[RMDB]
RNA sequence: GGGAACGACUCGAGUAGAGUCGAAAAAGCCGUCUACGGACGGCAAUGUCGGCUUCCCUCAUCACACCGGAAGCUGUUACGUCACUUCCGCUGUAUCAGCUCCAGCUGUGAUGAGUGAAGGGGCAAAUUACGGACUACUGUUCGCAGUAGUCCGUAAAAAAGAAACAACAACAACAAC
Reactivity to DMS in 0.01 (KOAc 150mM, MgCl2 10mM, bicine 150mM(pH8.5), 24C), signal-to-noise 1, nucleotides 027 to 126: a050g000c050c000g000u000c000u000a200c160g000g000a020c020g000g010c030a020a000u000g040u000c000g010g020c010u000u010c000c000c020u000c030a000u020c000a000c000a020c020c020g010g000a050a070g010c000u020g000u020u000a000c000g020u000c120a180c300u100u040c140c060g000c050u000g010u000a010u000c000a030g050c000u000c000c000a020g010c170u000g020u000g000a030u000g000a000g000u020g000a010a010g070g040g000g010c000a030a020a170
Reactivity to 2A3 in 0.01 (KOAc 150mM, MgCl2 10mM, bicine 150mM(pH8.5), 24C), signal-to-noise 4, nucleotides 027 to 126: a010g010c000c000g010u000c000u020a060c210g150g010a000c000g010g000c000a010a020u010g000u000c020g060g090c000u000u000c030c000c000u000c000a000u000c000a000c010a000c010c010g000g000a100a030g020c000u000g000u000u010a030c050g100u060c090a060c190u270u150c150c150g000c080u100g000u010a000u010c000a000g000c000u000c000c000a040g010c170u000g000u000g000a000u000g000a000g000u000g010a010a000g010g000g010g020c000a010a040a080
Background:
Structure probing data (DMS and 2A3) for a 177-nucleotide construct. The DMS profile rests on 2,441 reads. The reactions ran in a buffer of 150 mM KOAc, 10 mM MgCl2 and 150 mM bicine (pH 8.5), at 24 C. Reactivities are given for positions 27 through 126. High 2A3 reactivity points to a flexible backbone, as in loops and unpaired stretches.